[RMDB]
An RNA of 177 nucleotides, treated with 2A3 and DMS and read out base by base. The reactions ran in a buffer of 150 mM KOAc, 10 mM MgCl2 and 150 mM bicine (pH 8.5), at 24 C. For 2A3 the reverse transcriptase was SuperScript II with manganese. It was measured as part of the RMDB library TTRDEL.

RNA sequence: GGGAACGACUCGAGUAGAGUCGAAAAGAUAUGGACCAGGACAUGCUGUCCGAUCGGAAACGAUCGGUCAGCAACAGCCUGUGUCCUAAGUCAAAUCGCACGACAUCGUUCGCGAUGUCGUGCGAAACAUAGACUUGGACUUCGGUCCAAGUCUAUGAAAAGAAACAACAACAACAAC
Reactivity to 2A3 in 0.01 (KOAc 150mM, MgCl2 10mM, bicine 150mM(pH8.5), 24C), signal-to-noise 1, nucleotides 027 to 126: g030a000u080a040u170g000g000a000c000c000a000g000g020a030c080a220u060g030c000u030g040u010c000c000g000a000u000c010g030g050a100a100a020c000g000a010u000c020g000g000u000c000a010g000c010a000a010c020a010g130c000c010u070g100u130g000u000c000c000u030a140a040g060u020c020a070a040a200u040c000g000c010a000c000g030a010c020a010u000c030g080u180u170c300g040c050g200a030u070g000u010c040g010u010g020c000g000a000a000a000
Reactivity to DMS in 0.01 (KOAc 150mM, MgCl2 10mM, bicine 150mM(pH8.5), 24C), signal-to-noise 1, nucleotides 027 to 126: g000a050u000a300u020g000g020a010c010c000a020g010g030a060c050a260u010g020c000u000g000u000c000c000g020a000u000c000g020g000a160a050a130c010g010a000u000c000g020g000u000c000a020g010c010a000a020c220a150g010c000c020u000g000u000g010u000c000c000u010a000a050g000u000c030a080a090a130u000c030g010c000a010c000g030a020c000a000u020c000g000u000u000c170g000c000g010a020u000g000u000c010g030u000g010c020g000a000a030a060